[RMDB]
RNA sequence: GGGAACGACUCGAGUAGAGUCGAAAAGAAGAGAAUAAAUAGAGGAGUCAGGGUUCGCACACGCUCCGCGAACCUACGGUAACACUGACUGUGGAGCGGAAAAGGCAGAUACAGGACUGCCAAAGAAGCGUAUACGCUAUUUCGAUAGCGUAUACGCAAAAGAAACAACAACAACAAC
Reactivity to 2A3 in 0.01 (KOAc 150mM, MgCl2 10mM, bicine 150mM(pH8.5), 24C), signal-to-noise 5, nucleotides 027 to 126: g120a030a010g110a000g050a100a050u120a140a090a040u210a050g120a060g130g030a030g010u020c010a030g010g030g000u010u020c000g010c000a030c010a020c060g020c000u000c010c010g000c000g000a000a010c000c000u010a030c040g050g020u070a080a010c050a050c090u070g060a020c000u050g080u080g100g000a000g010c000g040g010a030a180a010a010g010g000c010a010g010a020u100a190c070a010g060g110a060c010u010g010c010c000a010a040a000g030a080a000
Reactivity to DMS in 0.01 (KOAc 150mM, MgCl2 10mM, bicine 150mM(pH8.5), 24C), signal-to-noise 3, nucleotides 027 to 126: g030a080a040g000a100g000a120a080u030a010a090a060u000a050g020a180g030g000a070g030u010c040a020g010g010g000u000u000c010g000c060a060c220a100c030g000c030u010c020c030g000c010g020a000a030c020c010u000a010c130g000g010u000a110a060c100a230c100u000g000a040c060u020g000u030g000g010a030g010c030g010g020a080a030a100a140g000g000c000a000g010a130u010a060c300a080g000g000a130c030u000g000c000c000a030a080a070g030a110a170

An RNA of 177 nucleotides, treated with 2A3 and DMS and read out base by base. Conditions: 150 mM KOAc, 10 mM MgCl2 and 150 mM bicine (pH 8.5), 24 C. Reactivities are given for positions 27 through 126. For DMS the reverse transcriptase was MarathonRT.